[RMDB]
RNA sequence: GGGAACGACUCGAGUAGAGUCGAAAACUGGCGAAGUCCGGUCGUUGGGCUGUGCUGCAGCGCGAUCCAGGCACGGCGAUCGUCGGCUCGUCGACGCGCUGGGUGUUCGACGAGUCCCGGCGCACGGUCAACGACAACGCCGAGCGUGAGGGCGUGCCUAGCACAUUCCGUUCGCGGAAUGUGCUAGAAAAGAAACAACAACAACAAC
Reactivity to 2A3 in 0.01 (KOAc 150mM, MgCl2 10mM, bicine 150mM(pH8.5), 24C), signal-to-noise 2, nucleotides 027 to 156: c070u040g010g000c050g090a140a000g100u080c070c060g060g000u050c040g020u020u040g120g040g210c020u030g000u000g020c040u160g020c020a030g030c010g000c010g050a000u040c030c030a070g140g030c030a030c130g120g000c110g010a100u040c010g030u020c010g010g000c000u000c010g000u000c010g010a020c000g080c030g040c230u300g090g230g050u040g030u060u010c010g000a010c040g010a000g090u170c000c020c040g020g000c000g000c000a010c010g010g000u000c000a020a020c010g020a020c000a040a020c000g000c050c020g010a070g050c090g030u110g070a100g000g100g000c020g030u010g000c000
Background:
An RNA of 207 nucleotides, treated with 2A3 and read out base by base. The data come from the RNA Mapping Database (RMDB), library OK3TST. The RNA was probed in 150 mM KOAc, 10 mM MgCl2 and 150 mM bicine (pH 8.5) at 24 C. Reactivities are given for positions 27 through 156.